[RMDB]
Structure probing data (2A3 and DMS) for a 177-nucleotide construct.
In probing experiments dimethyl sulfate is read out at A N1 and C N3, which are open when not base-paired.
For 2A3 the reverse transcriptase was SuperScript II with manganese.
It was measured as part of the RMDB library OK1LIB.
The reactions ran in a buffer of 150 mM KOAc, 10 mM MgCl2 and 150 mM bicine (pH 8.5), at 24 C.
The DMS profile rests on 1,405 reads.

RNA sequence: GGGAACGACUCGAGUAGAGUCGAAAAGAGAUAUUAUCCUUUUUCAAAAUGGACGAUUCAGUUCAAAUCUUAAAAAGAGGUGUCAAAAUUGAAAAAAGAAUUAUUGGAAUGGAUUAUUUCAAUUGCACUUGAUUGCAAAGUUCGCUUUGCAAUCAAGAAAAGAAACAACAACAACAAC
Reactivity to 2A3 in 0.01 (KOAc 150mM, MgCl2 10mM, bicine 150mM(pH8.5), 24C), signal-to-noise 4, nucleotides 027 to 126: g060a000g010a000u040a030u150u090a020u100c020c000u170u170u050u000u070c050a060a050a020a040u030g050g010a020c030g090a090u150u020c030a040g040u030u000c020a030a050a070u060c020u030u110a070a040a020a040a070g060a020g020g040u060g090u150c060a060a100a060a130u030u080g060a030a030a030a010a000a010g080a020a090u080u070a060u090u050g020g030a000a000u020g020g090a030u090u040a010u010u110u010c080a040a150u060u120g010c060a050
Reactivity to DMS in 0.01 (KOAc 150mM, MgCl2 10mM, bicine 150mM(pH8.5), 24C), signal-to-noise 1, nucleotides 027 to 126: g000a050g000a070u000a040u090u050a000u000c000c000u040u000u000u000u000c010a000a030a060a010u050g000g020a080c040g040a090u000u030c080a020g020u010u030c050a110a200a100u000c020u000u010a020a130a020a040a070g010a030g000g000u000g000u050c150a140a040a050a010u000u000g020a000a010a040a100a070a130g000a110a030u030u000a020u010u020g010g040a040a020u030g000g000a050u020u000a000u020u000u000c000a030a120u010u030g000c120a110